RNA sequence: GGGAACGACUCGAGUAGAGUCGAAAAGGGCUUGAACCAUCGCCCGAAUAAGAUGGAUGAUACAAGUCGACAUAGUACGCGACAUAGAACGUACUCAUUGAAGUGCGAAAGCACGAAGUCCGACGUGUCUGGGACGAUCAUCAGGCAAGACUUAGAACCCAUACCGAGGAUUCGUCCUCGGUAUGGGAAAAGAAACAACAACAACAAC
Reactivity to 2A3 in 0.01 (KOAc 150mM, MgCl2 10mM, bicine 150mM(pH8.5), 24C), signal-to-noise 1, nucleotides 027 to 156: g030g000g060c120u150u110g130a060a100c060c000a050u050c030g000c000c000c000g030a080a060u210a120a060g050a000u070g000g070a010u060g010a070u120a070c050a020a020g000u000c000g000a000c000a070u090a040g000u030a060c020g030c050g020a020c030a210u050a000g000a000a000c000g000u020a000c110u090c000a020u090u180g070a280a000g000u000g000c000g130a230a040a000g080c050a000c060g000a000a000g010u050c060c020g040a070c010g060u040g000u070c050u010g070g000g000a100c060g000a130u040c000a000u030c000a000g000g130c020a030a030g000a000c020u040u040a050g010a110a100